About this RNA: The record gives the reactivity of an RNA of 177 nucleotides to DMS. The DMS profile rests on 653 reads.

RNA sequence: GGGAACGACUCGAGUAGAGUCGAAAAUUAUAACGUGGCUGCCCGGCCUGGAACAGUCCCACAACCUGCUCCAGAAGGACCCAAGGUUGACAGAUCCUUUGAGACCUAUGCUAAGGAAACAAAAUAAUGUACUUAUUUCGUUCGCGAAAUAAGUACAAAAAGAAACAACAACAACAAC
Reactivity to DMS in 0.01 (KOAc 150mM, MgCl2 10mM, bicine 150mM(pH8.5), 24C), signal-to-noise 1, nucleotides 027 to 126: u010u000a120u030a070a050c090g000u000g060g010c010u000g020c020c020c040g030g010c010c010u000g010g040a060a080c130a040g010u000c040c030c080a090c200a070a080c080c000u000g020c060u000c000c000a030g030a090a080g000g060a060c080c040c050a030a030g030g040u000u000g060a170c140a070g000a160u010c000c000u000u000u000g000a090g020a090c050c040u010a020u000g000c020u010a070a080g000g040a070a080a000c070a100a090a050a140u030a050a090